The record gives the reactivity of an RNA of 170 nucleotides to 2A3 and DMS. For DMS the reverse transcriptase was MarathonRT. The DMS profile rests on 3,985 reads. For 2A3, 3,517 sequencing reads were counted.

RNA sequence: GGGAACGACUCGAGUAGAGUCGAAAACAAAGCUCGUGUCUAUUAUGAGAGCAUGUCUUACCAGGAGCAAGAUGAACUUUUUGCCAUGACAAAGCGUAACGUCAUUCCUACCAUGACUCAAAUGAAUUAACAGCCCGGUUCGCCGGGCUGAAAAGAAACAACAACAACAAC
Reactivity to 2A3 in 0.01 (KOAc 150mM, MgCl2 10mM, bicine 150mM(pH8.5), 24C), signal-to-noise 3, nucleotides 027 to 129: c030a000a090a040g000c000u000c000g010u000g040u060c040u040a110u110u020a120u230g090a060g000a000g050c020a000u020g000u000c060u070u060a150c040c050a040g010g060a010g000c040a000a070g000a010u060g000a000a060c010u030u040u000u000u080g030c000c030a050u080g010a070c010a040a020a020g060c060g010u020a060a100c030g010u030c030a030u000u000c000c000u000a080c040c020a050u000g070a070c010u000c030a000a070a140u060g000a000a070u080u020a080a000
Reactivity to DMS in 0.01 (KOAc 150mM, MgCl2 10mM, bicine 150mM(pH8.5), 24C), signal-to-noise 2, nucleotides 027 to 129: c040a160a250a230g000c020u000c080g080u010g000u010c050u010a200u070u000a100u000g000a070g000a040g000c000a050u000g020u010c000u000u130a110c080c040a020g010g000a070g000c150a010a020g030a060u000g020a080a090c110u000u000u000u000u000g060c130c050a090u080g050a080c060a040a050a130g020c180g040u110a000a000c090g000u020c000a020u020u000c050c000u000a070c000c000a070u020g000a110c020u040c000a160a010a040u010g020a070a070u050u000a000a140